[RMDB]
RNA sequence: GGGAACGACUCGAGUAGAGUCGAAAACCUCGGCGGGGCCGGGAGCCGCGCCAGUCGGAGCCCCUGGCUGAGGGCGGUCAGCCAGCUUCUCAGCGCCCAUCCCUCCGGAGAGCAGCCGGGGGGCAUGUCCGCAUGUACGUUUCGACGUACAUGCGGAAAAAGAAACAACAACAACAAC
Reactivity to 2A3 in 0.01 (KOAc 150mM, MgCl2 10mM, bicine 150mM(pH8.5), 24C), signal-to-noise 1, nucleotides 027 to 126: c000c020u000c030g000g010c000g070g020g000g000c040c000g160g110g050a000g000c020c000g040c000g020c120c030a010g060u050c020g010g040a050g020c010c000c000c020u040g000g000c000u000g010a100g010g000g030c020g000g030u030c010a020g030c030c020a030g020c040u140u040c010u020c040a030g040c000g020c010c000c000a050u050c040c010c000u040c000c000g020g020a100g000a000g160c100a020g050c000c000g000g000g020g000g000g030c010a020u120g020

Chemical mapping of a 177-nucleotide RNA with 2A3. The data come from the RNA Mapping Database (RMDB), library RFM100. The reactions ran in a buffer of 150 mM KOAc, 10 mM MgCl2 and 150 mM bicine (pH 8.5), at 24 C.